[RMDB]
RNA sequence: GGGAACGACUCGAGUAGAGUCGAAAACACGCCCGCGCCUUGCCUGCGAAGCCUGCCCAUGCUUUCCAGAAGCCGGACCACCUCGGCACGGCUAAGCCCGGUUGUCGGCUCGUCGAAGAGUACGAAAAAUGCAUCCACCAUUCGUGGUGGAUGCAUUAAAAGAAACAACAACAACAAC
Reactivity to DMS in 0.01 (KOAc 150mM, MgCl2 10mM, bicine 150mM(pH8.5), 24C), signal-to-noise 2, nucleotides 027 to 126: c110a190c110g030c000c000c040g020c010g000c040c030u000u000g000c010c000u050g000c060g010a090a130g000c030c000u000g000c030c000c020a050u010g000c020u000u000u000c120c030a120g030a070a050g010c010c020g010g000a080c030c040a060c080c060u000c060g000g000c140a050c050g020g030c030u000a090a120g000c070c030c000g000g000u010u000g010u020c050g000g000c000u000c000g020u010c100g010a070a090g000a070g040u000a030c040g020a010a090a060
Reactivity to 2A3 in 0.01 (KOAc 150mM, MgCl2 10mM, bicine 150mM(pH8.5), 24C), signal-to-noise 2, nucleotides 027 to 126: c080a010c060g030c000c000c000g030c000g030c010c000u020u100g000c000c000u020g010c030g060a040a000g060c000c010u050g000c020c000c000a040u100g020c000u020u050u050c000c010a040g020a070a000g000c020c030g010g040a010c010c020a080c000c040u110c120g030g000c020a020c050g010g000c020u060a070a000g010c020c020c000g020g000u030u010g060u060c000g040g000c000u000c020g050u020c010g070a140a000g020a010g030u090a140c040g090a120a000a010

Background:
Chemical mapping of a 177-nucleotide RNA with DMS and 2A3. The data come from the RNA Mapping Database (RMDB), library OK1LIB.